[RMDB]
This 207-nucleotide RNA was probed chemically with DMS and 2A3. For 2A3, 4,177 sequencing reads were counted. 2A3 adducts were read by reverse transcription with SuperScript II with manganese. The data come from the RNA Mapping Database (RMDB), library M2RFPK. The RNA was probed in 150 mM KOAc, 10 mM MgCl2 and 150 mM bicine (pH 8.5) at 24 C. Values cover nucleotides 27 to 156.
RNA sequence: GGGAACGACUCGAGUAGAGUCGAAAAGAUUCCUCGUUGUUGAGCGAGGUUUAAACAAAUCGACCACACAAACGUAGAGCCGACUACGAAUUUAUAAAUUAAGGCAUUAAGUGUGAUAAGGAGACAAAAAACGAUGUUGUGUUCGCACAACAUCGAAGGUUAUUAAAUCGUUCGCGAUUUAAUAACCAAAAGAAACAACAACAACAAC
Reactivity to DMS in 0.01 (KOAc 150mM, MgCl2 10mM, bicine 150mM(pH8.5), 24C), signal-to-noise 2, nucleotides 027 to 156: g000a300u000u000c000c000u000c050g040u010u020g020u010u000g000a130g020c050g020a060g050g000u010u010u010a100a050a090c120a010a120a140u010c040g000a060c000c010a090c040a280c000a150a070a080c040g020u000a040g000a260g000c000c040g020a140c040u000a040c030g000a260a090u010u000u000a030u010a090a040a080u010u000a100a130g000g000c020a250u000u000a040a110g030u000g020u020g000a080u020a090a060g010g020a120g000a030c050a010a050a070a090a040a150c010g010a030u010g020u000u000g020u010g030u000u000c300g000c040a010c000a030a010c000a000u000c000g000a030a020
Reactivity to 2A3 in 0.01 (KOAc 150mM, MgCl2 10mM, bicine 150mM(pH8.5), 24C), signal-to-noise 4, nucleotides 027 to 156: g060a090u170u120c000c000u000c000g010u000u020g000u000u010g000a000g000c000g000a000g040g010u030u110u050a020a000a010c030a000a010a000u000c000g000a000c000c010a000c000a000c010a000a200a030c020g000u000a000g000a010g010c020c010g030a010c000u000a000c000g050a010a000u100u270u060a190u120a100a090a050u130u110a010a020g000g000c010a020u130u190a200a100g000u000g010u010g020a010u050a050a030g120g010a050g030a040c130a040a160a020a050a010a020c020g000a000u010g000u000u000g000u000g010u010u020c070g010c050a000c000a010a000c000a000u000c000g000a010a010